[RMDB]
RNA sequence: GGGAACGACUCGAGUAGAGUCGAAAAUACAUCUGUGAGAUCAUCCUACAUUCAGUAAGUUAGAUCUUUGGGAGUGACUGAUUCUAAAUGAGCAGGACAGAAGAGAGGAGUAUGUAUACUUUGAAUAAAAAGCCUUUAUAUUCUCCUUCCCAAGCUAGCCUUUUAAUAGGUUCGCCUAUUAAAAGGCAAAAGAAACAACAACAACAAC
Reactivity to DMS in 0.01 (KOAc 150mM, MgCl2 10mM, bicine 150mM(pH8.5), 24C), signal-to-noise 2, nucleotides 027 to 156: u000a070c020a080u000c030u020g020u000g000a090g000a080u000c060a130u000c010c010u010a050c020a200u010u010c140a120g020u000a060a060g010u000u000a090g000a050u010c020u000u000u000g000g020g020a120g040u000g010a130c060u000g000a140u000u000c060u000a080a070a110u020g020a070g100c030a050g010g010a110c060a080g000a050a110g010a090g030a100g000g010a050g030u000a030u000g040u000a040u010a020c000u000u010u000g010a140a180u000a060a130a060a040a050g010c030c110u000u010u000a030u000a070u020u000c000u000c010c010u000u010c020c010c030a000a150g000c080u000a230
Reactivity to 2A3 in 0.01 (KOAc 150mM, MgCl2 10mM, bicine 150mM(pH8.5), 24C), signal-to-noise 4, nucleotides 027 to 156: u150a000c030a060u020c040u080g040u090g100a030g010a040u050c000a040u030c010c020u010a080c020a100u120u230c030a030g010u050a120a030g020u050u100a060g020a080u040c000u020u040u100g060g000g000a070g040u040g030a020c040u020g050a170u110u000c020u070a090a130a110u180g030a040g050c040a020g020g030a030c010a030g090a080a020g060a030g020a020g070g000a010g020u050a000u070g040u010a040u030a080c020u040u060u040g070a200a080u160a210a200a020a020a010g030c010c000u010u130u010a070u010a020u040u070c000u000c000c000u010u020c010c000c000a000a010g120c020u130a020